This 207-nucleotide RNA was probed chemically with DMS and 2A3. It was measured as part of the RMDB library RNAMAK. Values cover nucleotides 27 to 156. The DMS profile rests on 2,235 reads.
[RMDB]
RNA sequence: GGGAACGACUCGAGUAGAGUCGAAAACAUGACUUCGGUCAUGACGCUUGAUAUGGAUCAGGAAUUCUCGAAGAACUGUGGUAGCUAUAUCGGAAACGAUAUAGCAAACACAGGGAGAGAACCUGAUCCUAAGUCCAUAGUCGGGGUUCGCCCCGAAAGUACCCUUUAGGUUCGCCUAAAGGGUACUAAAAGAAACAACAACAACAAC
Reactivity to DMS in 0.01 (KOAc 150mM, MgCl2 10mM, bicine 150mM(pH8.5), 24C), signal-to-noise 1, nucleotides 027 to 156: c020a010u000g060a050c010u000u000c290g040g010u000c000a010u000g020a040c150g000c050u000u000g020a250u000a230u010g010g020a060u020c000a000g030g000a090a250u000u000c020u000c010g010a080a160g070a080a210c000u000g000u000g000g000u000a300g020c020u000a020u000a000u000c000g010g000a220a100a280c010g000a010u010a030u000a020g030c000a000a050a190c060a020c000a070g000g000g000a270g000a020g010a030a100c010c000u000g000a010u000c000c020u000a010a110g010u000c050c070a110u010a080g000u000c000g020g000g000g000u000u000c070g050c000c000c000c000g020a000a010
Reactivity to 2A3 in 0.01 (KOAc 150mM, MgCl2 10mM, bicine 150mM(pH8.5), 24C), signal-to-noise 4, nucleotides 027 to 156: c000a010u010g010a000c010u090u050c300g090g010u000c000a010u000g050a040c100g070c130u070u110g040a060u050a060u260g010g000a010u000c000a010g030g080a210a300u110u000c000u020c020g210a300a060g000a040a020c000u000g010u020g030g040u060a010g000c000u000a000u000a000u020c010g050g000a080a020a040c020g000a000u000a000u000a000g020c010a010a020a000c000a000c010a000g000g010g010a050g000a000g010a010a010c000c000u000g020a000u010c000c000u000a000a000g000u000c010c000a080u100a180g150u050c000g030g010g010g020u080u130c150g150c010c010c000c010g000a030a000